[RMDB]
RNA sequence: GGGAACGACUCGAGUAGAGUCGAAAAAUCUUUAAGCAGAUGGCAGGUUCACCCCGUACGGUACGGAAGUUCGCGCUUCCGUGAAACGCGAAAAUCGGACGGUGGCUGCAAGUCGCAUCGCAAAACCUAUAGCUUGUUAGGUUCGCCUAACAAGCAACCCUAGGCAUAGAUUCGUCUAUGCCUAGGGAAAAGAAACAACAACAACAAC
Reactivity to 2A3 in 0.01 (KOAc 150mM, MgCl2 10mM, bicine 150mM(pH8.5), 24C), signal-to-noise 3, nucleotides 027 to 156: a000u070c040u060u160u120a110a020g010c060a080g030a040u040g090g030c040a020g090g020u200u150c020a040c000c020c010c010g000u000a020c050g000g020u010a000c000g000g020a000a010g000u030u210c070g020c050g000c060u000u000c010c010g000u000g010a050a080a010c090g010c020g110a080a030a010a100u070c010g000g040a030c080g020g030u040g040g000c030u010g000c000a000a050g090u110c010g000c100a030u010c020g070c050a060a040a040a110c020c030u120a090u090a170g020c000u010u020g000u000u000a010g000g000u020u060c100g030c030c000u000a000a000c000a000a000g010c000a000a000
Source information:
The data come from the RNA Mapping Database (RMDB), library M2RFPK. The record gives the reactivity of an RNA of 207 nucleotides to 2A3. The RNA was probed in 150 mM KOAc, 10 mM MgCl2 and 150 mM bicine (pH 8.5) at 24 C. 2A3 adducts were read by reverse transcription with SuperScript II with manganese.